[RMDB]
RNA sequence: GGGAACGACUCGAGUAGAGUCGAAAAGAUAUGGAUCACUCAUCGAUCGUACUGGGUCGGAAACGACCUUACGGGAGAUGUGAUCCUAAGUCAAAGAGGACCCCAUCGUUCGCGAUGGGGUCCUCAACUGAAUCAGUAACUUCGGUUACUGAUUCAGAAAAGAAACAACAACAACAAC
Reactivity to DMS in 0.01 (KOAc 150mM, MgCl2 10mM, bicine 150mM(pH8.5), 24C), signal-to-noise 3, nucleotides 027 to 126: g000a020u000a300u000g010g000a010u000c010a020c040u010c230a070u000c000g000a300u010c000g000u000a010c300u010g010g000g010u010c000g020g010a070a080a250c010g000a010c000c000u000u000a000c010g010g000g020a260g000a040u000g010u000g000a010u000c000c000u000a020a050g000u000c010a080a080a160g010a020g000g000a000c000c000c000c000a010u000c000g010u000u020c290g020c010g030a020u000g000g010g010g000u000c000c010u000c000a000a050

This 177-nucleotide RNA was probed chemically with DMS.
DMS adducts were read by reverse transcription with MarathonRT.